[RMDB]
An RNA of 177 nucleotides, treated with DMS and 2A3 and read out base by base. The 2A3 profile rests on 5,519 reads. DMS adducts were read by reverse transcription with MarathonRT. Conditions: 150 mM KOAc, 10 mM MgCl2 and 150 mM bicine (pH 8.5), 24 C.

RNA sequence: GGGAACGACUCGAGUAGAGUCGAAAAAGAAAGUCUUCCAAGACGUCGGAAUUUGGACCGACCUCGAGCUCAACAAACCUUUGUCAUCCAAGUGCCGGACACGCUCCACGCCACAAUUUGAAUGCAACAUAUUUACCAGGUUCGCCUGGUAAAUAUGAAAAGAAACAACAACAACAAC
Reactivity to DMS in 0.01 (KOAc 150mM, MgCl2 10mM, bicine 150mM(pH8.5), 24C), signal-to-noise 6, nucleotides 027 to 126: a080g000a090a090a080g020u000c030u000u000c120c130a120a110g000a030c090g030u000c030g000g000a140a110u010u000u010g010g010a090c020c010g000a080c110c030u000c040g000a080g010c080u000c050a080a090c140a060a060a100c040c040u000u000u000g020u000c050a090u000c040c020a060a060g020u010g020c050c040g000g020a080c070a060c110g000c040u000c020c030a060c050g010c020c020a060c110a040a080u010u010u010g000a070a090u000g010c100a070a160
Reactivity to 2A3 in 0.01 (KOAc 150mM, MgCl2 10mM, bicine 150mM(pH8.5), 24C), signal-to-noise 5, nucleotides 027 to 126: a000g120a040a060a000g040u020c020u130u010c030c010a050a020g050a010c020g010u060c020g050g080a160a150u120u090u200g090g040a040c020c010g000a010c000c010u010c010g040a020g000c020u040c060a020a090c020a060a120a080c030c010u080u040u090g050u050c030a050u010c020c020a080a030g030u020g070c030c010g030g020a040c020a020c090g020c020u020c010c010a030c030g020c000c000a060c020a080a060u090u110u210g080a100a050u120g050c020a040a040